[RMDB]
RNA sequence: GGGAACGACUCGAGUAGAGUCGAAAAGAUAUGGAACCUUCCAUGACAGCAACAGCUACGAUCGGAAACGAUCGUAGACAUGCUGGUGGACUGGGUUCCUAAGUCAAAAGCAGCGUUCGCGCUGCAACUUAAUACACUCCUUCGGGAGUGUAUUAAGAAAAGAAACAACAACAACAAC
Reactivity to 2A3 in 0.01 (KOAc 150mM, MgCl2 10mM, bicine 150mM(pH8.5), 24C), signal-to-noise 5, nucleotides 027 to 126: g010a030u090a060u200g010g000a010a010c000c000u040u000c000c020a020u090g300a200c000a000g010c000a010a110c030a260g060c010u000a000c000g000a000u010c010g010g040a090a070a050c020g000a000u000c010g000u000a000g020a010c010a010u050g000c010u000g000g020u000g020g030a050c290u200g080g000g010u000u000c000c010u020a080a020g050u030c050a030a010a050a180g000c000a000g010c000g050u100u220c300g010c010g000c140u000g000c000a000a000
Reactivity to DMS in 0.01 (KOAc 150mM, MgCl2 10mM, bicine 150mM(pH8.5), 24C), signal-to-noise 7, nucleotides 027 to 126: g010a050u000a300u000g010g000a000a000c010c010u000u000c000c000a030u000g010a300c040a020g010c010a050a160c300a150g010c000u000a000c000g000a010u000c000g010g000a130a150a270c010g010a000u000c000g020u000a000g000a040c080a140u000g010c000u000g010g030u000g000g000a040c300u000g020g000g000u000u000c000c000u000a020a110g000u000c040a090a100a140a140g020c000a010g010c000g020u010u020c250g020c010g030c010u000g000c010a030a030